[RMDB]
RNA sequence: GGGAACGACUCGAGUAGAGUCGAAAACAGACCCCAGUGAGGCUUUCGAGAAAUUCGUAAGUCUCUUUGCUACUUUAAUGACUUUUUCUGGUAAUGUAGAUCUUGAUGCGUUAGCUAGUGAUAUUUUAGGGCUUCACCUUCGGGUGAAGCAAAAGAAACAACAACAACAAC
Reactivity to 2A3 in 0.01 (KOAc 150mM, MgCl2 10mM, bicine 150mM(pH8.5), 24C), signal-to-noise 5, nucleotides 027 to 129: c050a040g110a030c000c010c010c010a050g040u030g070a000g000g030c000u010u010u010c040g000a010g040a080a300a110u150u000c010g040u010a000a000g000u000c000u000c000u010u060u030g020c000u010a110c000u060u080u120a080a060u090g060a090c030u110u080u040u150u040c030u040g040g010u060a040a040u080g030u080a020g020a140u020c030u040u120g020a040u100g010c010g030u000u030a060g010c030u000a030g010u020g170a050u030a160u120u110u110u150a090g000g080
Reactivity to DMS in 0.01 (KOAc 150mM, MgCl2 10mM, bicine 150mM(pH8.5), 24C), signal-to-noise 5, nucleotides 027 to 129: c070a090g030a180c090c000c020c070a160g040u040g010a030g030g040c030u070u000u000c050g000a050g010a230a000a190u050u000c010g030u010a090a000g070u020c020u000c040u020u080u000g010c000u060a090c070u010u010u020a060a110u040g040a110c100u070u000u010u060u020c060u040g020g030u030a050a100u080g000u040a070g000a090u020c080u010u070g040a090u010g000c020g030u000u030a070g040c070u000a000g060u040g020a050u040a000u000u000u000u000a080g030g030